The record gives the reactivity of an RNA of 177 nucleotides to 2A3 and DMS.
Conditions: 150 mM KOAc, 10 mM MgCl2 and 150 mM bicine (pH 8.5), 24 C.
The data come from the RNA Mapping Database (RMDB), library OK2TRN.
The 2A3 profile rests on 2,018 reads.

RNA sequence: GGGAACGACUCGAGUAGAGUCGAAAACGCCGCCCGCGGCGCUCAGCACGGUGACCGCGCCGGCCAGGCCGAGCGCUCGUCGCCGGGGCAUGCCGUCAGGCCGGGUGCCGGUCUCCGGCCGGUCGGACAUACUAUCGCCGUUCGCGGCGAUAGUAUGAAAAGAAACAACAACAACAAC
Reactivity to 2A3 in 0.01 (KOAc 150mM, MgCl2 10mM, bicine 150mM(pH8.5), 24C), signal-to-noise 1, nucleotides 027 to 126: c030g030c020c010g070c020c030c020g040c020g060g000c040g060c060u080c060a060g070c050a010c080g070g080u160g030a030c000c000g020c060g000c030c020g050g000c080c090a090g060g000c010c020g040a090g090c020g020c000u020c040g090u080c020g020c010c020g020g010g020g000c070a090u220g150c040c040g070u050c030a030g010g030c000c000g000g000g000u010g030c000c000g000g010u000c010u040c010c000g000g040c000c010g030g020u010c010g000g000a010
Reactivity to DMS in 0.01 (KOAc 150mM, MgCl2 10mM, bicine 150mM(pH8.5), 24C), signal-to-noise 2, nucleotides 027 to 126: c090g030c020c020g020c070c060c120g020c040g000g050c020g000c070u000c090a120g020c090a100c060g000g010u000g000a050c010c080g000c150g010c010c020g010g000c240c150a080g030g020c000c000g010a120g020c010g020c000u000c040g000u000c090g000c010c010g010g000g010g000c100a080u010g010c080c030g010u010c030a100g030g010c000c020g010g000g010u000g010c010c020g000g000u000c010u010c030c030g030g000c000c000g020g010u000c030g000g010a220